Chemical mapping of a 177-nucleotide RNA with DMS and 2A3.
Reactivities are given for positions 27 through 126.
It was measured as part of the RMDB library TTRDEL.
The RNA was probed in 150 mM KOAc, 10 mM MgCl2 and 150 mM bicine (pH 8.5) at 24 C.

[RMDB]
RNA sequence: GGGAACGACUCGAGUAGAGUCGAAAAGAUAUGGAGAGCCGAUGAAACCUAGGUUCGAAGUGUCGGAAACGACACGUAGUUAGGUGGAGGACUCUCCUAAGUCAAAAUCUAGCGUUCGCGCUAGAAACUGUGCUUUACUCUUCGGAGUAAAGCACAGAAAAGAAACAACAACAACAAC
Reactivity to DMS in 0.01 (KOAc 150mM, MgCl2 10mM, bicine 150mM(pH8.5), 24C), signal-to-noise 1, nucleotides 027 to 126: g000a070u000a300u020g000g000a000g010a020g020c010c000g000a100u000g020a240a210a000c030c000u000a010g000g010u000u000c060g000a070a300g000u000g000u010c020g030g000a010a030a180c000g030a000c000a000c000g000u030a110g000u000u000a000g030g000u000g030g040a140g000g000a160c010u000c010u010c000c030u020a020a080g000u000c070a090a070a110a160u000c000u000a000g040c000g030u000u010c300g020c060g000c030u000a020g020a040a040a110
Reactivity to 2A3 in 0.01 (KOAc 150mM, MgCl2 10mM, bicine 150mM(pH8.5), 24C), signal-to-noise 1, nucleotides 027 to 126: g000a000u070a000u160g080g000a060g000a000g090c040c030g300a300u050g060a070a020a020c000c000u020a040g000g210u170u130c130g030a060a040g000u000g040u010c010g060g110a060a170a000c030g000a000c010a000c000g050u020a050g050u020u000a000g020g000u030g000g060a120g040g050a200c000u000c000u000c010c000u000a110a030g050u010c040a000a000a070a260u040c000u020a030g010c000g040u090u060c300g000c000g050c180u000a010g000a050a000a000